[RMDB]
RNA sequence: GGGAACGACUCGAGUAGAGUCGAAAAACUGGACGCCAUUUUCACGGCUUACAAGCGCUUUGAACGACUAUACGGAAGUGCUGAGAACCAUGAGACUAUGACCUCAGUCAUCGCCAGAGCAAUGUACGACCGUUUUAGUGUUCGCACUAAAACGGUCAAAAGAAACAACAACAACAAC
Reactivity to 2A3 in 0.01 (KOAc 150mM, MgCl2 10mM, bicine 150mM(pH8.5), 24C), signal-to-noise 2, nucleotides 027 to 126: a000c010u010g060g040a020c020g000c020c000a050u080u000u100u070c050a030c060g000g050c000u020u040a030c030a010a060g000c020g010c030u060u130u080g060a240a070c020g100a050c100u140a100u040a230c060g000g040a030a000g000u040g030c000u000g010a020g020a060a000c070c020a050u020g010a030g030a110c070u090a010u040g000a020c020c020u140c090a040g020u040c020a030u030c030g000c010c020a020g030a020g030c050a110a130u150g020u070a060c130
Reactivity to DMS in 0.01 (KOAc 150mM, MgCl2 10mM, bicine 150mM(pH8.5), 24C), signal-to-noise 2, nucleotides 027 to 126: a030c070u020g010g040a080c120g030c050c030a080u020u020u000u000c040a070c100g000g030c050u000u010a070c190a130a010g000c070g020c030u050u000u000g000a140a180c030g000a150c160u000a080u020a180c070g000g050a080a030g020u000g050c020u000g000a160g010a080a110c060c010a020u000g010a080g020a040c280u020a120u000g010a070c060c030u000c060a020g010u000c050a130u010c040g010c020c030a070g010a140g000c070a030a070u000g020u020a090c240

Structure probing data (2A3 and DMS) for a 177-nucleotide construct. For 2A3, 1,156 sequencing reads were counted. Values cover nucleotides 27 to 126.